[RMDB]
RNA sequence: GGGAACGACUCGAGUAGAGUCGAAAACCAAUUCGAUUCGUCGAAUUGGAAAAAACCUUUGUGCGAGACUUUCGUUGAUCACAUAUUGGGCCCAUUGGGCCUUAUGUGGGAGAAAGCUCGCACUCUGGUAAAAAAUACAACGUUUCGACGUUGUAAACCAUUAGGUCCCUUUCGAGGGACCUAAUGGAAAAGAAACAACAACAACAAC
Reactivity to 2A3 in 0.01 (KOAc 150mM, MgCl2 10mM, bicine 150mM(pH8.5), 24C), signal-to-noise 2, nucleotides 027 to 156: c000c030a010a020u000u000c000g020a000u040u020c140g030u000c000g160a000a010u020u000g000g000a010a130a060a000a020a020c020c000u030u000u020g010u000g000c010g020a020g220a300c030u040u000u000c050g170u200u010g020a000u010c000a000c000a020u010a100u070u250g040g000g010c000c000c000a040u030u300g040g000g000c000c000u000u000a000u000g000u000g000g010g000a020g000a010a000a000g000c000u000c010g000c000a000c000u000c000u000g000g000u070a080a020a090a000a000a000u060a010c000a000a000c010g020u050u010u160c230g090a020c010g000u010u020g000u030a190a050a000

Structure probing data (2A3) for a 207-nucleotide construct. The 2A3 profile rests on 1,289 reads. The RNA was probed in 150 mM KOAc, 10 mM MgCl2 and 150 mM bicine (pH 8.5) at 24 C.